Overview:
Source: RMDB library M2RFPK, as collected in RNAgym. This 207-nucleotide RNA was probed chemically with DMS and 2A3. Reactivities are given for positions 27 through 156. The reactions ran in a buffer of 150 mM KOAc, 10 mM MgCl2 and 150 mM bicine (pH 8.5), at 24 C. DMS adducts were read by reverse transcription with MarathonRT. For DMS, 1,604 sequencing reads were counted. The 2A3 profile rests on 2,019 reads.
RNA sequence: GGGAACGACUCGAGUAGAGUCGAAAAACGAGUCCGUACGCGGACUCGAAGGGCCCCAGAAGACCAAGGGGCCCAAACCUACCACUCAUUAGACGCAUGGAAAUCACUAGGUGAUACGUCACCUAGAACACGCUUUUAAGCUUCGGCUUAAAAGCAAUCCAAAUAAAGUGUUCGCACUUUAUUUGGAAAAAGAAACAACAACAACAAC
Reactivity to DMS in 0.01 (KOAc 150mM, MgCl2 10mM, bicine 150mM(pH8.5), 24C), signal-to-noise 1, nucleotides 027 to 156: a130c000g020a000g000u000c010c000g060u010a110c210g060c040g050g040a030c000u020c000g020a030a020g050g080g000c010c000c000c040a200g010a160a140g000a120c130c070a140a140g020g010g020g030c000c000c020a010a020a050c040c010u030a100c050c020a050c030u000c040a120u000u010a090g000a140c070g010c120a040u000g010g000a090a080a120u010c020a180c000u000a000g000g030u000g000a050u010a070c230g000u010c010a010c000c000u010a010g000a040a110c080a100c150g030c000u000u000u000u000a000a030g010c040u000u010c300g000g020c000u000u010a000a000a020a010g020c030a010a030
Reactivity to 2A3 in 0.01 (KOAc 150mM, MgCl2 10mM, bicine 150mM(pH8.5), 24C), signal-to-noise 3, nucleotides 027 to 156: a000c000g000a000g000u000c010c000g000u020a010c200g000c020g070g000a010c000u000c000g000a000a000g000g000g000c000c000c000c000a110g080a300a040g050a120c070c050a110a090g000g000g010g050c010c000c000a000a000a000c010c030u040a030c000c040a030c040u110c010a060u050u170a070g050a110c090g100c120a060u110g090g130a080a060a100u160c060a060c050u000a000g010g010u030g000a030u030a060c200g040u000c000a000c000c000u000a000g000a000a010c040a020c060g010c000u030u000u000u000a000a000g000c000u020u050c140g060g000c000u000u010a000a000a000a000g000c000a010a010